[RMDB]
RNA sequence: GGGAACGACUCGAGUAGAGUCGAAAAUUGAGGUUUAUGCGUUGCUAAGGCUGGACUACUCUUCUUCUUCGGGAGCCUGAGCGUAAGCCUCGAGCUUGCAAGGCCCGAAGAUCGGCAAGUUAGCUAAGCCUUGCGGGACAUUCGUGUCCUGCGGGGUAAAAGAAACAACAACAACAAC
Reactivity to DMS in 0.01 (KOAc 150mM, MgCl2 10mM, bicine 150mM(pH8.5), 24C), signal-to-noise 7, nucleotides 027 to 126: u020u000g000a030g010g010u010u000u000a020u020g010c050g020u020u020g020c090u010a170a070g000g010c000u000g000g010a070c170u010a080c140u020c080u010u010c070u000u010c010u000u000c010g000g010g000a070g000c000c000u000g000a090g010c090g020u020a010a020g000c000c010u010c120g000a070g000c020u000u000g010c020a120a050g000g000c000c010c000g000a020a020g000a020u020c080g000g000c070a040a050g010u000u010a090g000c040u010a070a240
Reactivity to 2A3 in 0.01 (KOAc 150mM, MgCl2 10mM, bicine 150mM(pH8.5), 24C), signal-to-noise 6, nucleotides 027 to 126: u040u060g010a020g020g020u020u030u020a030u070g020c030g020u060u120g060c070u050a040a020g020g000c000u010g010g040a040c020u070a060c030u060c010u160u010c020u030u000c000u000u000c000g010g020g000a040g060c000c000u020g020a030g020c040g020u050a000a010g000c000c000u010c040g000a030g000c000u000u000g000c000a030a020g010g010c000c000c000g000a000a000g000a010u040c000g010g000c020a010a040g020u040u030a010g010c010u040a050a020